[RMDB]
RNA sequence: GGGAACGACUCGAGUAGAGUCGAAAACACGUUUCACUAUACCUUCUCCGCUCCAGACGCGGUUACUGAGGUGCUGCCUCGCUCCUACCACGAAACCAUGUGGUACAUCCAUGGUCGCCGCAAGUUCCAUGAUUACCAGCUUCGGCUGGUAAUCAUGAAAAGAAACAACAACAACAAC
Reactivity to DMS in 0.01 (KOAc 150mM, MgCl2 10mM, bicine 150mM(pH8.5), 24C), signal-to-noise 4, nucleotides 027 to 126: c060a120c130g010u030u000u000c010a080c110u010a070u020a090c060c050u000u000c030u020c020c020g010c020u010c050c050a090g000a110c130g020c060g000g020u030u020a050c070u010g020a080g000g020u000g000c090u000g020c030c000u000c090g000c070u000c030c040u020a060c010c000a060c030g010a070a090a170c180c110a060u030g030u000g010g000u020a030c140a110u020c040c000a070u020g000g030u000c010g010c020c000g000c100a050a090g000u010u000c040
Reactivity to 2A3 in 0.01 (KOAc 150mM, MgCl2 10mM, bicine 150mM(pH8.5), 24C), signal-to-noise 6, nucleotides 027 to 126: c080a020c040g030u060u070u050c090a080c080u100a100u090a190c010c020u070u020c040u020c020c000g020c030u020c020c030a030g020a110c060g000c020g080g000u040u100a040c050u080g030a030g060g030u050g030c030u080g010c000c000u040c030g000c000u030c000c000u040a050c010c000a040c040g120a100a070a030c040c020a100u180g030u050g010g010u040a050c020a040u030c010c010a060u100g030g010u010c020g010c020c000g020c030a030a050g030u050u020c020

Structure probing data (DMS and 2A3) for a 177-nucleotide construct. For DMS, 6,117 sequencing reads were counted. The 2A3 profile rests on 5,942 reads. 2A3 is a SHAPE reagent: it acylates the 2'-hydroxyl of flexible nucleotides of all four kinds. DMS adducts were read by reverse transcription with MarathonRT. 2A3 adducts were read by reverse transcription with SuperScript II with manganese.